RNA sequence: GGGAACGACUCGAGUAGAGUCGAAAAAGAUAAGCUUAAGAUACUCGCAUACGGAGAUGACGUUAUAUUCUCAUAUAAUUUUAAACUUGAUAUGGCCGUACUCGCUAAAGAGGGAGAAAAAUACGGAAAAAUACACUCAGUUCGCUGAGUGUAUUUUAAAAGAAACAACAACAACAAC
Reactivity to 2A3 in 0.01 (KOAc 150mM, MgCl2 10mM, bicine 150mM(pH8.5), 24C), signal-to-noise 2, nucleotides 027 to 126: a000g110a130u140a070a010g000c060u080u060a050a000g000a070u090a080c010u000c030g070c040a030u020a100c080g060g040a020g020a080u070g070a020c020g000u060u000a070u000a020u170u000c020u000c020a010u050a050u010a180a100u070u120u050u130a040a050a030c020u020u010g010a020u120a120u270g080g010c020c010g000u000a040c000u040c030g010c090u040a080a090a090g210a120g010g120g010a010g030a120a080a000a000a000u080a020c010g000g120a060
Reactivity to DMS in 0.01 (KOAc 150mM, MgCl2 10mM, bicine 150mM(pH8.5), 24C), signal-to-noise 3, nucleotides 027 to 126: a100g000a160u010a050a080g000c050u000u000a030a070g000a100u010a090c080u000c080g020c090a100u000a060c150g010g010a040g000a080u000g000a110c200g000u000u000a070u010a090u000u000c050u000c010a080u010a080u010a040a020u000u000u000u000a030a020a090c030u000u000g000a120u020a040u000g020g020c030c020g010u000a030c030u000c030g000c030u010a070a080a110g000a090g000g000g000a050g020a020a050a080a060a170u000a020c050g010g010a020
Structure probing data (2A3 and DMS) for a 177-nucleotide construct. For 2A3 the reverse transcriptase was SuperScript II with manganese. The DMS profile rests on 1,788 reads. For 2A3, 940 sequencing reads were counted.